[RMDB]
RNA sequence: GGGAACGACUCGAGUAGAGUCGAAAAAAAGUUAAAUCUAGUCAUCAAGGCAGUAGAAAAAGGUAAAAAUUGGUCACAACUUGUUGAGAUCCUUCCUAAUAUGCAUUCAGUAUGCAUAGUGCACGUGGAUGGUAAGACCUUUCGAGGUCUUACCAUCAAAAGAAACAACAACAACAAC
Reactivity to 2A3 in 0.01 (KOAc 150mM, MgCl2 10mM, bicine 150mM(pH8.5), 24C), signal-to-noise 1, nucleotides 027 to 126: a000a000a130g150u120u020a060a150a030u050c060u060a000g050u040c030a090u000c120a170a170g010g000c000a000g060u110a150g170a000a120a000a000a000g110g080u270a140a000a000a000a000u090u110g000g000u000c060a010c000a200a020c050u050u020g040u040u030g050a090g000a090u080c000c000u040u070c000c000u000a040a040u000a010u000g000c000a000u060u080c020a000g070u020a090u050g000c050a000u000a010g030u090g000c080a050c080g090u090g170
Reactivity to DMS in 0.01 (KOAc 150mM, MgCl2 10mM, bicine 150mM(pH8.5), 24C), signal-to-noise 2, nucleotides 027 to 126: a050a060a040g000u000u030a020a110a070u000c010u000a070g000u000c020a040u010c090a100a060g010g000c040a070g020u040a080g020a030a010a050a100a040g000g020u040a030a030a050a100a040u010u010g010g010u000c050a050c070a050a050c050u010u000g030u000u000g000a150g020a060u010c040c070u020u000c000c020u000a060a120u050a010u000g010c000a010u020u050c150a130g040u040a010u010g000c000a020u000a010g010u000g070c100a080c100g020u000g000